[RMDB]
RNA sequence: GGGAACGACUCGAGUAGAGUCGAAAAUACAAGUACGAAAGUACAAGCCUUAUCAGUUGGGCCUUCUGGUCAAAUUAGCGCUCACCCAGGAGGUCCUUCGCAUGAGGUCGAGAAGCGCUAAAAGAAAUAUAGAUCAAGGGUUCGCCCUUGAUCUAUAAAAAGAAACAACAACAACAAC
Reactivity to DMS in 0.01 (KOAc 150mM, MgCl2 10mM, bicine 150mM(pH8.5), 24C), signal-to-noise 1, nucleotides 027 to 126: u020a140c130a100a100g000u010a010c010g000a190a080a140g000u000a010c010a220a190g010c010c010u000u000a010u030c060a150g000u000u000g000g000g000c010c010u000u000c000u000g030g010u000c050a050a070a140u010u000a010g000c000g000c000u000c050a140c210c000c000a010g000g020a010g010g010u000c000c000u000u000c060g000c190a020u000g000a050g010g000u010c060g000a110g020a060a050g010c000g010c010u010a010a070a130a040g000a040a050a070